[RMDB]
RNA sequence: GGGAACGACUCGAGUAGAGUCGAAAAGUGCGACAUUUCGAUGUCGCACAAACCCAAAUGGUGGCACCUAACUAAACAAGCCGGGAAUAGCCAGAUGCCAACGUCCUUAGCCCUUCGGGGCUAAGAAUUGGUAAACAAGAUUCGUCUUGUUUACCAAAAAAGAAACAACAACAACAAC
Reactivity to DMS in 0.01 (KOAc 150mM, MgCl2 10mM, bicine 150mM(pH8.5), 24C), signal-to-noise 8, nucleotides 027 to 126: g020u000g010c000g000a010c010a010u000u000u010c170g020a020u000g010u000c000g010c000a000c010a000a070a120c000c000c000a080a090a090u010g000g020u000g000g010c010a040c020c020u000a080a090c040u020a030a070a220c060a080a100g020c050c050g010g000g000a070a200u000a040g010c030c040a030g010a050u000g000c010c010a030a060c100g010u000c120c000u000u000a000g010c000c000c000u000u010c190g030g000g010g020c000u000a000a000g010a060a070
Reactivity to 2A3 in 0.01 (KOAc 150mM, MgCl2 10mM, bicine 150mM(pH8.5), 24C), signal-to-noise 4, nucleotides 027 to 126: g000u000g000c000g010a000c000a010u040u060u130c210g130a010u020g000u000c010g000c010a000c000a000a000a000c000c000c000a030a100a030u170g040g000u020g020g000c040a140c070c000u040a070a080c020u080a120a090a100c060a150a020g040c060c030g010g040g000a090a060u050a030g010c020c010a020g020a050u060g010c000c010a050a030c060g080u100c010c000u000u010a000g010c010c010c010u030u050c220g020g000g000g000c000u000a000a000g010a000a030

The record gives the reactivity of an RNA of 177 nucleotides to DMS and 2A3. For 2A3 the reverse transcriptase was SuperScript II with manganese. For DMS, 13,144 sequencing reads were counted. DMS adducts were read by reverse transcription with MarathonRT. For 2A3, 5,695 sequencing reads were counted.